[RMDB]
RNA sequence: GGGAACGACUCGAGUAGAGUCGAAAAGUUUACGCUCCAAGAUCGGUGGAUAGCAGCCCUAUCAAUAUCUAGGAGAACUGUGCUAUGUUUAGAAGAUUAGGUAGUCUCUAAACAGAACAAUAUACCUCAUACGUUAGGACGUUCGCGUCCUAACGAAGUGAAAUAUUUCCUUCGGGAAAUAUUUCACAAAAGAAACAACAACAACAAC
Reactivity to DMS in 0.01 (KOAc 150mM, MgCl2 10mM, bicine 150mM(pH8.5), 24C), signal-to-noise 1, nucleotides 027 to 156: g020u000u010u010a090c080g000c000u000c010c000a130a080g010a040u000c150g000g070u000g020g000a120u010a010g050c070a300g000c090c200c000u020a080u000c010a100a210u000a060u000c090u010a140g010g000a120g000a020a140c000u000g000u020g000c040u000a220u010g000u000u000u000a010g010a050a040g010a040u000u000a080g010g020u010a110g000u000c010u010c000u000a030a030a030c010a010g030a050a010c020a040a110u000a080u000a080c020c010u000c090a120u000a080c000g010u010u000a010g040g010a040c000g000u010u000c300g010c010g030u000c000c000u000a000a000c020g050a020a050
Reactivity to 2A3 in 0.01 (KOAc 150mM, MgCl2 10mM, bicine 150mM(pH8.5), 24C), signal-to-noise 5, nucleotides 027 to 156: g000u050u070u120a050c050g000c010u000c000c000a050a020g010a030u060c110g110g180u120g150g020a030u040a030g060c070a020g020c030c010c000u020a020u010c030a060a050u030a010u150c020u060a050g000g030a030g030a030a060c090u120g030u030g060c030u040a030u080g000u020u000u000a070g020a290a000g000a050u070u030a020g040g030u020a000g010u010c000u000c000u000a010a010a000c000a010g040a060a020c090a110a030u120a010u010a130c000c020u090c050a080u110a180c020g000u000u000a000g000g000a000c000g020u040u030c220g010c000g060u000c000c000u000a000a000c000g000a010a010